[RMDB]
RNA sequence: GGGAACGACUCGAGUAGAGUCGAAAAAGUGGGUUUCAUCCCCAGGAUGCAAGGUUGGUUCAACAUUCGCAAAUCAAUAAACGUGAUUCAUCACAUAAACAGAACUACAGACAAAAACCACAUGAUCCGAAAUAUACUUGUUCGCAAGUAUAUUUCGAAAAGAAACAACAACAACAAC
Reactivity to 2A3 in 0.01 (KOAc 150mM, MgCl2 10mM, bicine 150mM(pH8.5), 24C), signal-to-noise 8, nucleotides 027 to 126: a000g070u100g000g030g000u070u160u110c050a080u110c020c000c000c000a010g050g010a020u050g040c030a030a050g090g010u060u040g020g050u070u080c020a050a050c020a130u090u110c050g000c090a050a070a080u100c040a020a080u130a180a130a030c090g020u020g020a030u100u070c040a050u060c010a100c010a050u140a040a150a020c050a040g020a030a000c020u060a030c030a020g050a020c020a030a150a020a030a020c030c010a020c020a050u110g030a040u050c050
Reactivity to DMS in 0.01 (KOAc 150mM, MgCl2 10mM, bicine 150mM(pH8.5), 24C), signal-to-noise 8, nucleotides 027 to 126: a100g030u010g020g000g000u000u010u010c080a100u010c050c010c040c070a120g010g000a070u000g010c080a060a060g010g020u000u000g000g020u010u000c050a090a090c120a090u010u010c090g020c100a070a070a070u000c090a060a060u010a060a090a120c180g000u010g010a040u000u010c130a050u000c030a020c040a090u010a070a050a120c100a080g000a050a050c060u010a030c080a070g010a100c100a060a060a040a050a070c020c020a020c080a070u010g000a080u000c110